[RMDB]
RNA sequence: GGGAACGACUCGAGUAGAGUCGAAAAAGCCUGGUCGAUACGUCGACCAGGCAAUGCCGCCACAACGGCUUCCUGGCGUGGCGGAUCUCAUCCAAUGGAGCAACCCUCCGGAUACGUCCGGAGCGAAAAAAGCUCUGCUUCUUCGGAAGCAGAGCAAGGCUAGUAAUACGUUCGCGUAUUACUAGCCAAAAGAAACAACAACAACAAC
Reactivity to 2A3 in 0.01 (KOAc 150mM, MgCl2 10mM, bicine 150mM(pH8.5), 24C), signal-to-noise 1, nucleotides 027 to 156: a010g300c000c000u000g000g000u000c000g000a010u000a040c190g050u020c000g000a000c000c000a000g000g020c000a000a000u020g020c000c010g000c000c000a030c000a020a020c060g050g000c020u110u170c000c040u010g020g000c000g000u000g010g020c050g030g000a010u040c030u030c060a030u030c040c060a030a180u200g000g000a000g000c000a010a130c000c000c000u000c020c000g000g000a030u030a020c190g050u010c010c000g000g000a000g010c080g070a110a050a010a000a000a000g010c000u000c000u000g020c020u000u000c000u020u010c020g150g010a000a000g000c010a000g000a000g010c010a020a020